[RMDB]
RNA sequence: GGGAACGACUCGAGUAGAGUCGAAAAUUGACUAUUAACGAGGGAUGUUAAACUCAUAUCUUUCAGGACGCGUUUGACAAUACCUACAAAUCUGACAGAAAACGAAGCAGUUGAAGACCAACGCUCCAUGAGUAUGGGACUUCGGUCCCAUACUCAUAAAAGAAACAACAACAACAAC
Reactivity to DMS in 0.01 (KOAc 150mM, MgCl2 10mM, bicine 150mM(pH8.5), 24C), signal-to-noise 1, nucleotides 027 to 126: u020u000g000a080c200u000a020u000u010a050a100c300g000a050g030g000g000a170u010g000u030u000a000a000a090c130u000c060a130u050a160u000c020u000u030u050c120a040g000g080a050c200g000c230g000u000u000u000g000a020c020a000a020u000a180c030c000u000a000c170a000a050a100u000c000u010g000a020c160a100g060a000a050a050a040c140g010a070a020g000c030a000g050u000u000g020a110a070g000a150c040c000a000a070c100g070c060u000c000c160
Reactivity to 2A3 in 0.01 (KOAc 150mM, MgCl2 10mM, bicine 150mM(pH8.5), 24C), signal-to-noise 2, nucleotides 027 to 126: u140u080g150a030c060u030a020u240u010a230a000c070g070a080g010g000g030a030u000g000u050u050a040a010a000c030u020c030a020u030a290u160c090u030u180u210c090a010g000g090a090c200g000c040g000u000u000u100g000a000c000a020a020u100a240c000c020u020a050c060a000a080a110u000c040u110g010a060c000a050g020a060a190a000a000c040g060a050a030g040c100a070g020u070u080g020a070a000g030a000c010c010a020a020c030g000c070u000c000c000